Overview: Chemical mapping of a 207-nucleotide RNA with 2A3 and DMS. For 2A3 the reverse transcriptase was SuperScript II with manganese. For DMS, 2,300 sequencing reads were counted.
RNA sequence: GGGAACGACUCGAGUAGAGUCGAAAAUCUCGUCGACAAUGGCGGAACUGGCGACGUGACUGUCGCCCCAAGCAACUUCGCUAACGGGGUCGCUGAAUGGAUCAGCUCUAACUCGCGUUCACAGGCUUACAAAGUAACCUGUAGCGUUCGUCAGAGCGAACCGAUACGUGUUCGCACGUAUCGGUUCAAAAGAAACAACAACAACAAC
Reactivity to 2A3 in 0.01 (KOAc 150mM, MgCl2 10mM, bicine 150mM(pH8.5), 24C), signal-to-noise 2, nucleotides 027 to 156: u030c040u020c050g030u010c020g030a090c050a160a160u200g030g010c010g030g030a080a090c050u070g020g010c010g010a010c030g040u050g080a040c080u100g010u030c020g000c000c000c000c010a040a030g010c000a030a070c040u100u100c020g010c070u120a190a070c070g030g010g030g020u050c010g000c030u060g070a090a100u160g080g060a110u080c100a050g010c000u010c010u020a020a000c000u010c030g020c000g020u010u010c040a010c000a020g000g000c040u000u070a040c070a090a260a020g020u030a020a030c000c000u000g010u000a020g000c010g010u010u030c030g010u000c020a020g010a010g030c020
Reactivity to DMS in 0.01 (KOAc 150mM, MgCl2 10mM, bicine 150mM(pH8.5), 24C), signal-to-noise 2, nucleotides 027 to 156: u000c000u020c040g040u000c010g000a080c050a090a060u020g020g040c030g000g010a040a080c070u000g020g060c010g000a010c000g050u020g000a270c260u050g000u000c000g010c010c000c000c050a050a060g040c020a060a050c060u000u010c010g030c040u000a140a030c080g010g000g050g050u000c030g040c010u000g010a150a140u000g020g010a290u000c100a110g000c000u000c020u000a020a040c010u020c080g000c010g000u000u000c130a050c010a030g020g050c050u000u000a300c100a160a100a240g060u000a070a020c010c010u000g000u000a020g020c000g010u000u000c060g000u000c020a010g010a060g020c020
Conditions: 150 mM KOAc, 10 mM MgCl2 and 150 mM bicine (pH 8.5), 24 C.